The record gives the reactivity of an RNA of 177 nucleotides to DMS and 2A3.

RNA sequence: GGGAACGACUCGAGUAGAGUCGAAAAUUAGCUUUUACUGCUGCCAAAAAAUUUAAUACGAAUCGUUAUUUAGCUGUCUGUUUAGCUAUGGCACUCGUUCAUCCAGGUAUUAAUGAAUUGGCUGGAAAUCCAUUACUCCGUUCGCGGAGUAAUGGAUAAAAGAAACAACAACAACAAC
Reactivity to DMS in 0.01 (KOAc 150mM, MgCl2 10mM, bicine 150mM(pH8.5), 24C), signal-to-noise 1, nucleotides 027 to 126: u000u020a130g020c060u000u010u000u000a130c190u000g010c040u000g020c000c000a010a050a060a170a110a060u000u000u000a010a060u000a000c030g010a020a040u000c200g020u000u000a080u020u000u000a050g030c020u000g000u000c150u000g000u000u020u000a020g000c030u000a030u000g000g030c050a120c120u000c040g000u000u000c060a060u010c060c040a120g030g010u000a030u000u000a010a020u000g000a110a100u020u000g000g000c010u000g000g000a040a120
Reactivity to 2A3 in 0.01 (KOAc 150mM, MgCl2 10mM, bicine 150mM(pH8.5), 24C), signal-to-noise 1, nucleotides 027 to 126: u000u050a010g070c020u000u000u080u300a160c100u080g080c000u000g000c020c010a040a000a000a000a040a000u120u190u130a060a000u050a000c080g020a060a050u040c030g030u090u120a080u090u170u000a030g010c000u030g040u120c020u030g260u140u160u190a000g060c040u030a050u030g020g000c010a000c070u000c040g050u080u030c020a020u110c000c000a060g000g140u000a010u040u010a040a040u020g050a000a050u030u000g010g000c000u020g030g070a000a190
About this RNA
2A3 adducts were read by reverse transcription with SuperScript II with manganese. For DMS, 963 sequencing reads were counted.